This 177-nucleotide RNA was probed chemically with DMS and 2A3. For DMS the reverse transcriptase was MarathonRT. The reactions ran in a buffer of 150 mM KOAc, 10 mM MgCl2 and 150 mM bicine (pH 8.5), at 24 C. For 2A3, 2,165 sequencing reads were counted. Reactivities are rounded to 0.1 and cut off at 0 and 3.
[RMDB]
RNA sequence: GGGAACGACUCGAGUAGAGUCGAAAAGAAAGUAUGUGGAAACAGAAAGCGACGUACGACGUCACGUCGUGAAGUGACGAAAUCUACGAAGUAGGGAGUUACGAAAGCUGAUGGACACAUACGAAAAGGGAGUGCAUAUGUUCGCAUAUGCACUCCCAAAAGAAACAACAACAACAAC
Reactivity to DMS in 0.01 (KOAc 150mM, MgCl2 10mM, bicine 150mM(pH8.5), 24C), signal-to-noise 2, nucleotides 027 to 126: g000a130a050a100g020u000a000u000g060u000g050g000a300a150a070c030a030g000a050a070a060g010c000g000a170c010g000u040a050c040g030a220c030g000u000c050a030c000g010u000c130g100u060g000a050a090g000u000g000a010c020g000a040a130a040u100c000u000a010c000g000a120a220g080u000a000g000g000g000a240g000u020u010a040c000g000a070a170a150g000c020u000g010a300u000g010g000a300c000a000c000a010u030a000c000g000a070a050a060a000
Reactivity to 2A3 in 0.01 (KOAc 150mM, MgCl2 10mM, bicine 150mM(pH8.5), 24C), signal-to-noise 2, nucleotides 027 to 126: g210a010a090a000g010u010a000u000g000u000g050g000a060a010a000c010a010g030a060a130a000g020c000g060a030c000g000u010a000c100g040a000c080g110u080c060a000c000g100u110c050g010u160g070a110a010g010u000g000a000c000g000a140a040a010u010c000u000a040c060g230a190a000g000u010a000g020g000g020a100g000u030u000a000c010g000a060a010a000g000c000u010g010a270u090g110g010a000c000a000c000a000u000a000c010g030a010a050a000a000